This 177-nucleotide RNA was probed chemically with DMS and 2A3. It was measured as part of the RMDB library M2PK50. For DMS the reverse transcriptase was MarathonRT. The DMS profile rests on 1,829 reads. Values cover nucleotides 27 to 126. For 2A3 the reverse transcriptase was SuperScript II with manganese.

RNA sequence: GGGAACGACUCGAGUAGAGUCGAAAAGAGCUUUUUUUCGAAAAAGCUCCGGCGCAAUGCCUAUGAGUACACUUCACAAGGGUUUGUGGUGGUCAAUGGCAAUACCAGCAAUCUUCGGAUUGCUGAAAACUAGGUUCCAUUUCGAUGGAACCUAGUUAAAAGAAACAACAACAACAAC
Reactivity to DMS in 0.01 (KOAc 150mM, MgCl2 10mM, bicine 150mM(pH8.5), 24C), signal-to-noise 2, nucleotides 027 to 126: g000a010g000c000u000u000u000u000u000u000u010c110g010a000a010a000a010a010g010c000u000c010c060g020g000c140g000c150a160a070u000g000c010c010u000a200u000g010a070g010u000a130c050a020c050u000u010c040a010c020a040a060g010g010g000u000u000u000g020u000g020g000u010g010g010u000c020a010a300u010g010g000c020a040a070u020a080c160c000a000g000c000a010a010u000c000u000u010c200g030g010a010u000u000g000c000u000g000a020a020
Reactivity to 2A3 in 0.01 (KOAc 150mM, MgCl2 10mM, bicine 150mM(pH8.5), 24C), signal-to-noise 2, nucleotides 027 to 126: g000a000g000c000u100u020u000u000u030u030u100c090g040a040a020a000a000a000g010c010u010c020c020g050g010c050g000c110a120a070u120g000c000c010u040a100u100g000a000g080u110a060c020a030c030u140u150c030a010c020a070a110g250g230g170u100u150u040g020u010g010g010u030g010g010u000c020a030a030u010g020g000c000a020a040u100a180c070c020a000g020c000a000a000u000c010u040u000c070g060g000a000u000u010g000c000u000g010a060a050